[RMDB]
An RNA of 177 nucleotides, treated with 2A3 and DMS and read out base by base. Source: RMDB library M2PK50, as collected in RNAgym. The RNA was probed in 150 mM KOAc, 10 mM MgCl2 and 150 mM bicine (pH 8.5) at 24 C. DMS adducts were read by reverse transcription with MarathonRT. For DMS, 6,065 sequencing reads were counted.
RNA sequence: GGGAACGACUCGAGUAGAGUCGAAAAGGGAUAUUGUUCGCAAUAUCCCAAAAGGAACCAGGGACGGUGCCUGAGAACUGAAUAGCUAAUACGGAAGCUAAAAAACCACGGAGUUCGCUCCGUGGAAGUAGAAAAGUAUGUUCGCAUACUUUUCUACAAAAGAAACAACAACAACAAC
Reactivity to 2A3 in 0.01 (KOAc 150mM, MgCl2 10mM, bicine 150mM(pH8.5), 24C), signal-to-noise 4, nucleotides 027 to 126: g010g000g000a000u010a000u010u010g030u030u060c110g000c090a000a000u000a000u010c000c010c000a020a010a000a000g020g010a030a000c010c010a020g070g030g050a040c100g040g040u060g030c010c010u080g040a080g030a110a040c070u090g030a100a050u020a070g010c020u060a020a060u120a210c100g110g040a050a010g000c020u080a150a060a020a050a030a060c000c000a000c000g000g000a000g000u070u080c130g040c110u000c000c000g000u000g000g000a000a000
Reactivity to DMS in 0.01 (KOAc 150mM, MgCl2 10mM, bicine 150mM(pH8.5), 24C), signal-to-noise 5, nucleotides 027 to 126: g010g010g000a000u000a010u000u000g010u000u010c170g020c000a020a010u000a000u000c000c000c000a010a040a090a090g000g020a100a050c020c000a090g020g010g020a140c120g000g010u000g010c010c010u000g010a120g010a090a110c080u000g000a110a110u000a030g010c010u000a070a100u010a130c170g010g010a090a050g010c020u000a000a060a080a080a090a120c010c000a010c000g000g010a030g020u000u000c210g010c010u000c000c000g020u000g000g010a000a030